[RMDB]
Structure probing data (DMS and 2A3) for a 177-nucleotide construct.
RNA sequence: GGGAACGACUCGAGUAGAGUCGAAAAGGUGGCUCUGAGAGAGGAACUCCACAACCUGUGACAGAGUCACCGAUUUAGCAUGUUCGUCCUACUAAGCUCGUGCUUACGAAGUAGGACGUUCAUGCGAGGGUAGGAUUACCUUCGGGUAGUCCUACCCAAAAGAAACAACAACAACAAC
Reactivity to DMS in 0.01 (KOAc 150mM, MgCl2 10mM, bicine 150mM(pH8.5), 24C), signal-to-noise 7, nucleotides 027 to 126: g000g020u000g000g010c000u000c010u010g000a100g010a220g000a020g000g000a050a050c100u020c120c130a090c190a130a070c010c000u000g030u050g020a010c010a020g010a010g010u000c000a000c000c010g010a010u030u020u030a090g000c010a000u000g000u000u000c000g000u000c000c000u000a000c010u010a050a070g010c070u040c280g010u040g010c040u000u020a130c210g010a160a000g010u000a010g000g000a000c000g020u000u000c010a000u000g000c000g000a070
Reactivity to 2A3 in 0.01 (KOAc 150mM, MgCl2 10mM, bicine 150mM(pH8.5), 24C), signal-to-noise 9, nucleotides 027 to 126: g000g000u000g000g000c000u000c000u000g080a100g000a010g010a020g050g010a050a030c050u060c090c020a040c020a040a070c000c000u090g050u080g090a010c000a000g000a000g000u000c000a000c000c000g000a000u000u010u030a010g000c000a000u010g010u000u010c000g000u010c010c000u010a010c010u040a070a090g080c060u080c160g170u210g060c040u070u070a040c050g080a050a000g000u000a000g000g000a000c000g000u000u000c000a000u000g000c000g000a090